This 177-nucleotide RNA was probed chemically with DMS and 2A3. The RNA was probed in 150 mM KOAc, 10 mM MgCl2 and 150 mM bicine (pH 8.5) at 24 C. The 2A3 profile rests on 4,672 reads.
RNA sequence: GGGAACGACUCGAGUAGAGUCGAAAAGCGCGUGGAUACUGCAACGGUGCAGGAGAUGCUGAUGCAGAUGGUGCCGGGUGCCAUGCGCGGCGAAAGUGUGCGUUCGCUGCGGCAGCCCUGGCCAGAAUAGAUUAUCUGGGUUCGCCCAGAUAAUCUAAAAAGAAACAACAACAACAAC
Reactivity to DMS in 0.01 (KOAc 150mM, MgCl2 10mM, bicine 150mM(pH8.5), 24C), signal-to-noise 4, nucleotides 027 to 126: g010c060g020c060g040u000g010g010a120u000a110c040u000g010c040a060a110c090g010g010u000g020c030a090g010g020a100g010a120u000g010c030u000g010a100u010g010c020a060g000a130u000g010g010u010g030c010c010g010g000g000u020g010c020c040a170u010g000c030g000c000g010g010c010g000a010a010a060g010u010g010u000g010c080g000u000u000c000g010c000u010g010c020g000g010c060a260g000c000c000c000u000g000g010c010c050a050g010a080a120
Reactivity to 2A3 in 0.01 (KOAc 150mM, MgCl2 10mM, bicine 150mM(pH8.5), 24C), signal-to-noise 3, nucleotides 027 to 126: g060c060g000c040g040u080g060g020a080u090a220c010u020g000c000a060a050c070g070g050u080g000c030a040g100g110a130g030a050u060g000c000u030g000a060u070g020c010a010g020a150u040g050g090u210g020c000c010g040g000g040u200g010c050c000a090u190g010c020g010c020g010g010c000g020a010a030a040g140u210g030u090g150c110g020u010u010c000g000c020u030g010c000g090g010c020a060g010c000c000c020u020g010g000c010c000a000g030a040a060

Values are in units of 0.01, from 0 to 300, in steps of 10.